[RMDB]
RNA sequence: GGGAACGACUCGAGUAGAGUCGAAAAGAUAUGGAACUCCGUGGUGGGAGAUGUGGAUCGGAAACGAUCCAUACAUCGACGAUCACCGGAGUUCCUAAGUCAAAAGCGAAUCGUUCGCGAUUCGCAAGAGUAGGUUAGAGUUCGCUCUAACCUACUCAAAAGAAACAACAACAACAAC
Reactivity to 2A3 in 0.01 (KOAc 150mM, MgCl2 10mM, bicine 150mM(pH8.5), 24C), signal-to-noise 4, nucleotides 027 to 126: g000a000u050a030u140g010g000a010a000c010u000c030c040g120u160g070g060u080g060g070g030a090g010a010u000g010u010g020g000a010u000c020g000g020a010a040a040c010g010a000u000c010c000a000u050a010c000a010u010c010g250a290c080g180a050u030c010a000c050c010g000g010a000g000u010u000c000c000u010a000a010g020u020c010a000a040a150a100g010c000g000a010a000u010c010g040u090u150c300g040c020g140a000u010u010c000g000c010a010a010
Reactivity to DMS in 0.01 (KOAc 150mM, MgCl2 10mM, bicine 150mM(pH8.5), 24C), signal-to-noise 4, nucleotides 027 to 126: g000a030u010a300u000g000g010a010a010c000u000c000c000g030u000g010g020u010g010g000g020a220g010a000u000g020u000g010g000a010u010c000g000g000a130a060a220c000g010a020u000c000c010a060u010a050c040a030u000c000g000a300c080g000a050u000c000a010c100c090g020g000a010g000u010u000c000c000u000a010a070g000u010c030a100a080a130a150g000c000g000a020a010u000c000g010u010u020c270g010c020g010a010u000u000c010g010c000a040a040
Conditions: 150 mM KOAc, 10 mM MgCl2 and 150 mM bicine (pH 8.5), 24 C. An RNA of 177 nucleotides, treated with 2A3 and DMS and read out base by base. DMS (dimethyl sulfate) methylates the pairing face of unpaired adenines and cytosines. The DMS profile rests on 6,079 reads. 2A3 is a SHAPE reagent: it acylates the 2'-hydroxyl of flexible nucleotides of all four kinds. DMS adducts were read by reverse transcription with MarathonRT. The 2A3 profile rests on 12,375 reads.